[RMDB]
RNA sequence: GGGAACGACUCGAGUAGAGUCGAAAAUCGUACGAGAGUUCUCGUACUCGAGUUCGUACUCGAACGUGAGUUCUCGAUCACGAGAACGAGUUCGUGUGUGAGUGAACUCGAGAGUUCGAGAGAACUCGAUCGUUCACGAGAUCGAACGUGUGAGUGACCAUGCAGAUAUGUUCGCAUAUCUGCAUGGAAAAGAAACAACAACAACAAC
Reactivity to DMS in 0.01 (KOAc 150mM, MgCl2 10mM, bicine 150mM(pH8.5), 24C), signal-to-noise 4, nucleotides 027 to 156: u010c050g010u000a080c010g000a080g000a300g010u010u000c000u010c000g040u000a120c010u000c010g000a030g010u000u010c040g000u000a120c020u010c000g020a010a030c040g020u000g010a170g000u000u000c000u000c000g010a220u000c240a180c050g000a060g020a030a070c030g010a140g010u000u000c010g030u020g010u010g000u000g010a300g000u000g000a010a030c010u000c000g010a200g000a090g000u000u000c030g010a190g000a220g000a040a030c000u000c010g020a060u000c050g010u000u000c050a070c000g000a170g010a150u000c040g000a120a110c050g000u000g000u010g020a140g010u010g010a210
Reactivity to 2A3 in 0.01 (KOAc 150mM, MgCl2 10mM, bicine 150mM(pH8.5), 24C), signal-to-noise 8, nucleotides 027 to 156: u050c000g010u020a010c010g000a000g000a010g090u020u020c000u010c010g000u020a040c010u000c000g010a010g000u000u000c020g040u100a090c000u000c020g010a010a010c040g080u150g160a060g010u010u000c010u000c000g020a220u170c020a100c090g030a020g040a100a030c060g030a060g110u060u020c020g010u020g000u020g010u030g060a150g040u160g030a000a000c000u000c010g010a020g000a000g050u050u050c060g010a040g000a010g000a070a000c000u000c000g010a020u030c010g020u080u080c070a020c030g030a030g010a030u100c060g040a080a070c040g010u040g020u050g050a090g020u060g010a040